The record gives the reactivity of an RNA of 207 nucleotides to DMS and 2A3. The 2A3 profile rests on 2,928 reads. It was measured as part of the RMDB library M2RFOK. The RNA was probed in 150 mM KOAc, 10 mM MgCl2 and 150 mM bicine (pH 8.5) at 24 C. For DMS the reverse transcriptase was MarathonRT.
[RMDB]
RNA sequence: GGGAACGACUCGAGUAGAGUCGAAAAAGAGCCGGAUACGUCCGGCUCAACGGGGGAUACGUGUGGUGCUGUCCGCUCCCCCUAUGGCAUAACAAAUGCACCACACACUAGGCUACGGCCUAGUGAAAAAAUCCCUACAUGUUCGCAUGUAGGGAAAGACUUAUAUUAUGUUCGCAUAAUAUAAGUCAAAAGAAACAACAACAACAAC
Reactivity to DMS in 0.01 (KOAc 150mM, MgCl2 10mM, bicine 150mM(pH8.5), 24C), signal-to-noise 1, nucleotides 027 to 156: a140g010a020g010c010c000g010g000a050u000a040c160g080u000c010c000g000g000c010u010c010a030a030c080g010g020g010g090g000a090u010a050c010g030u010g010u020g010g020u010g010c010u000g000u010c050c040g000c100u000c000c000c010c020c010u000a030u010g010g100c020a100u000a120a120c160a050a090a100u010g000c010a040c000c000a050c010a120c000a020c000u010a010g000g010c000u010a150c300g030g000c000c030u010a020g010u000g010a000a020a050a040a100a130u010c100c010c000u000a010c000a000u010g000u000u000c300g030c000a010u010g030u000a010g020g010g010a020a000a010
Reactivity to 2A3 in 0.01 (KOAc 150mM, MgCl2 10mM, bicine 150mM(pH8.5), 24C), signal-to-noise 3, nucleotides 027 to 156: a010g000a000g000c010c000g010g020a020u040a030c150g090u010c000c000g000g000c000u000c000a000a000c000g000g000g010g020g000a050u080a170c080g020u010g000u000g010g000u000g000c010u030g070u080c040c040g060c060u060c000c000c000c000c000u030a120u130g070g000c080a100u080a240a050c030a070a050a020u080g000c000a000c010c000a000c000a000c000a000c000u000a000g000g000c000u010a010c250g080g000c000c000u000a000g000u020g000a050a000a000a000a000a030u030c020c000c000u000a000c000a000u010g030u050u040c110g000c150a000u000g000u000a000g000g000g000a000a010a010